An RNA of 207 nucleotides, treated with DMS and 2A3 and read out base by base. Conditions: 150 mM KOAc, 10 mM MgCl2 and 150 mM bicine (pH 8.5), 24 C. For DMS, 4,923 sequencing reads were counted. High DMS reactivity at an A or C suggests that its Watson-Crick edge is free.

RNA sequence: GGGAACGACUCGAGUAGAGUCGAAAAUAGCCAAGCAAGUAGAUGAUACAUGCACUGUUUUGGACACUCAAGAUUUGUUUGUUGACUGCACAAAGCUGUCUUCCCACGUGUCCUUUGAUGAAAGAACACAGACUGUAUCACCUCUAUCUAAAGCUUAUAUGCUGAUAGCAUUCGUGCUAUCAGCAUAAAAAGAAACAACAACAACAAC
Reactivity to DMS in 0.01 (KOAc 150mM, MgCl2 10mM, bicine 150mM(pH8.5), 24C), signal-to-noise 3, nucleotides 027 to 156: u010a070g030c050c030a100a170g030c070a170a150g040u000a060g040a050u010g000a020u010a020c030a060u000g040c040a150c020u010g030u010u000u000u000g000g000a080c010a050c030u010c030a050a070g000a090u010u000u000g000u000u010u000g030u020u010g020a090c060u000g000c090a090c050a030a090a070g000c010u000g010u000c040u030u000c060c030c030a170c300g000u010g010u010c000c000u010u010u000g040a230u030g030a130a050a110g000a010a020c060a050c010a160g010a050c040u000g010u010a040u030c010a000c000c010u000c080u000a100u010c080u010a100a110a110g010c020u000u000a160
Reactivity to 2A3 in 0.01 (KOAc 150mM, MgCl2 10mM, bicine 150mM(pH8.5), 24C), signal-to-noise 5, nucleotides 027 to 156: u080a020g080c040c010a040a000g030c040a080a020g040u030a010g040a040u030g000a010u010a000c010a010u130g050c150a060c090u040g050u060u060u070u050g020g000a000c000a000c020u070c100a120a120g030a240u120u160u160g150u150u100u050g050u020u040g020a030c030u060g010c030a010c040a130a100a060g010c010u020g030u010c000u000u020c020c020c010a040c030g000u010g000u000c000c000u010u050u100g100a140u060g040a010a100a110g120a090a010c040a000c010a100g030a050c010u010g020u010a000u050c000a010c010c050u030c000u010a080u040c050u090a110a120a010g000c000u040u050a090